Description: Conditions: 150 mM KOAc, 10 mM MgCl2 and 150 mM bicine (pH 8.5), 24 C. Structure probing data (DMS and 2A3) for a 207-nucleotide construct. For 2A3, 3,827 sequencing reads were counted. 2A3 adducts were read by reverse transcription with SuperScript II with manganese.

[RMDB]
RNA sequence: GGGAACGACUCGAGUAGAGUCGAAAAGACGUCGCCAAACGUUACCGGCGGAUCGACUGGGCCUAUCUGGACCCAACUAAGUAGCUUCGGCGGAAAAGGGGGGACCAUGACGCCGGAGCUGCUGACCGCGAUCCUGGGGGCCGGUGGGUUGACCGUGACUUAAAUACAACUUCGGUUGUAUUUAAGUAAAAGAAACAACAACAACAAC
Reactivity to DMS in 0.01 (KOAc 150mM, MgCl2 10mM, bicine 150mM(pH8.5), 24C), signal-to-noise 3, nucleotides 027 to 156: g010a060c060g020u000c040g040c050c060a040a080a080c030g000u010u010a040c030c010g020g000c050g010g040a040u010c010g010a130c080u010g010g020g030c000c010u000a140u000c220u010g040g020a040c010c000c000a050a100c060u010a090a040g030u000a030g000c020u000u000c000g020g020c010g000g010a070a070a070a170g020g010g020g040g010g000a180c080c050a140u000g000a170c000g050c000c000g000g010a040g010c000u000g000c010u000g000a100c100c070g010c000g000a030u000c010c030u000g030g020g030g040g050c050c020g020g020u010g020g010g000u010u000g020a080c030c030g010u000g010
Reactivity to 2A3 in 0.01 (KOAc 150mM, MgCl2 10mM, bicine 150mM(pH8.5), 24C), signal-to-noise 3, nucleotides 027 to 156: g060a010c020g020u050c020g080c090c010a140a090a080c080g050u070u070a030c000c000g010g020c010g000g000a030u000c000g040a070c050u020g010g000g030c030c000u170a250u220c150u160g180g050a300c020c000c000a020a030c030u090a050a020g010u010a000g010c000u010u010c000g000g010c000g020g050a040a160a050a140g010g000g010g000g040g010a020c070c000a040u080g040a020c010g000c000c000g000g000a000g000c000u000g000c000u000g000a020c020c050g040c000g020a020u000c000c020u070g020g000g030g050g000c000c000g000g010u030g000g060g000u010u150g020a060c020c050g030u050g020

The data come from the RNA Mapping Database (RMDB), library OK3TST.